[RMDB]
Source: RMDB libraries RFM100 and RFMREP, as collected in RNAgym. An RNA of 177 nucleotides, treated with DMS and 2A3 and read out base by base. The 2A3 profile rests on 3,053 reads. The RNA was probed in 150 mM KOAc, 10 mM MgCl2 and 150 mM bicine (pH 8.5) at 24 C.
RNA sequence: GGGAACGACUCGAGUAGAGUCGAAAAUGGCAUCCACCUUGGGUGCCUGUCCAACCGUCUAAAAAACGGUUGUUAGCAAGGGCCGGGUAAGACCGGUGCCAGCCGCCGCGGUAAUACCGGCGGCUCGCGAAGUAACUGCAUUCGUGCAGUUACUUCGAAAAGAAACAACAACAACAAC
Reactivity to DMS in 0.01 (KOAc 150mM, MgCl2 10mM, bicine 150mM(pH8.5), 24C), signal-to-noise 4, nucleotides 027 to 126: u010g000g000c000a010u000c000c000a190c240c190u020u030g020g000g010u000g000c000c000u000g010u020c060c000a070a020c010c010g010u000c010u000a010a030a160a110a210a000c010g000g010u000u000g000u020u030a110g000c160a110a100g000g000g000c010c000g000g000g000u010a120a180g000a200c000c020g000g010u000g010c020c020a050g000c000c000g010c000c000g000c180g010g000u000a090a090u060a260c060c000g000g000c000g000g000c000u000c040g000
Reactivity to 2A3 in 0.01 (KOAc 150mM, MgCl2 10mM, bicine 150mM(pH8.5), 24C), signal-to-noise 3, nucleotides 027 to 126: u060g010g000c000a020u000c010c010a110c090c170u120u250g010g000g000u000g000c000c000u000g040u000c020c000a000a000c010c000g000u000c010u040a040a040a040a010a000a000c010g000g000u000u000g010u020u110a050g000c030a040a130g020g000g000c010c000g000g040g010u050a070a000g040a090c010c000g020g010u040g180c020c010a000g000c000c000g000c000c000g020c160g000g020u050a050a030u030a140c010c000g000g000c000g010g000c000u000c000g000